The record gives the reactivity of an RNA of 177 nucleotides to DMS. The DMS profile rests on 803 reads. The RNA was probed in 150 mM KOAc, 10 mM MgCl2 and 150 mM bicine (pH 8.5) at 24 C.

RNA sequence: GGGAACGACUCGAGUAGAGUCGAAAAGAUAUGGACCAACUGCCACAUUUCAACAGCAGUGGAAACGAUUUCAUCGGAAACGAUGAAAUCGUUUCCACUGACAUGAAAGUGGUUUGGUCCUAAGUCAUCUUUCUUAGCUGUUCGCAGCUAAGAAAGAAAAAGAAACAACAACAACAAC
Reactivity to DMS in 0.01 (KOAc 150mM, MgCl2 10mM, bicine 150mM(pH8.5), 24C), signal-to-noise 1, nucleotides 027 to 126: g030a070u010a300u030g000g000a020c000c020a020a040c300u000g000c020c000a020c000a160u000u000u020c000a010a080c300a220g030c000a010g030u000g030g000a000a000a000c000g030a020u000u000u000c020a030u000c000g010g020a090a160a210c000g020a000u040g010a010a000a000u010c000g000u020u000u000c000c010a000c010u000g000a020c050a180u020g010a020a000a020g050u000g000g000u000u000u000g000g000u000c000c020u000a000a160g010u000c050a160